[RMDB]
RNA sequence: GGGAACGACUCGAGUAGAGUCGAAAAUCCAUCUGAUCCGUCCUGGCUCUCUUCGCCGGGGGAGCUCCCUCCCCAUCCUUGUCCUUUCUUAUUAUUCCUCGGAUGUUCCCCAGCCAGGGAUUGUCCUCCACAGCGGGGUUCGCCCCGCUGAAAAGAAACAACAACAACAAC
Reactivity to 2A3 in 0.01 (KOAc 150mM, MgCl2 10mM, bicine 150mM(pH8.5), 24C), signal-to-noise 3, nucleotides 027 to 129: u000c000c000a020u010c040u100g060a060u060c010c010g050u000c020c000u000g040g000c010u000c010u000c030u170u150c060g030c040c010g000g000g000g000g000a020g000c030u080c010c000c000u010c010c020c000c000a030u070c010c000u030u040g070u030c040c000u090u130u060c000u010u110a160u020u030a090u170u050c000c020u050c070g080g000a060u060g020u010u030c000c000c000c050a010g010c020c000a010g000g020g030a020u020u100g040u030c020c000u000c020c020a020
Reactivity to DMS in 0.01 (KOAc 150mM, MgCl2 10mM, bicine 150mM(pH8.5), 24C), signal-to-noise 2, nucleotides 027 to 129: u050c040c030a110u000c030u020g020a060u040c070c060g000u000c060c100u060g000g060c040u000c130u030c080u040u000c090g000c000c090g000g000g000g000g000a100g030c100u020c030c020c010u000c020c000c010c020a000u000c040c020u010u030g040u020c080c130u000u000u000c040u020u070a120u020u060a170u040u010c000c000u020c000g050g000a000u020g030u100u010c060c010c000c050a110g010c090c050a040g030g030g000a000u030u010g010u040c000c020u000c040c020a090